[RMDB]
RNA sequence: GGGAACGACUCGAGUAGAGUCGAAAACGCUUGUAGUUGAUAUUUGAGAUCCCCUAUCAUUGCAGGGUGACAGCGGAGCGGCUUCGCAGAGCUGCAUUAACCAGGGCUUCGGGCAGGCCAAAAACUAUGAGAGAAUAGUCUUCGGACUAUUCUCUCAAAAAGAAACAACAACAACAAC
Reactivity to DMS in 0.01 (KOAc 150mM, MgCl2 10mM, bicine 150mM(pH8.5), 24C), signal-to-noise 1, nucleotides 027 to 126: c130g000c090u000u040g020u000a080g000u020u010g030a080u000a070u000u030u000g020a160g000a060u000c020c010c010c100u000a100u000c060a100u000u000g000c090a020g010g000g040u000g000a020c070a050g010c100g030g020a190g030c070g020g000c040u020u020c090g020c180a100g000a070g020c020u000g000c020a090u010u000a050a130c150c040a090g000g010g010c060u020u010c060g000g010g000c060a060g000g000c030c060a060a060a040a070a070c190u010a070
An RNA of 177 nucleotides, treated with DMS and read out base by base. The reactions ran in a buffer of 150 mM KOAc, 10 mM MgCl2 and 150 mM bicine (pH 8.5), at 24 C. It was measured as part of the RMDB library OK2TRN.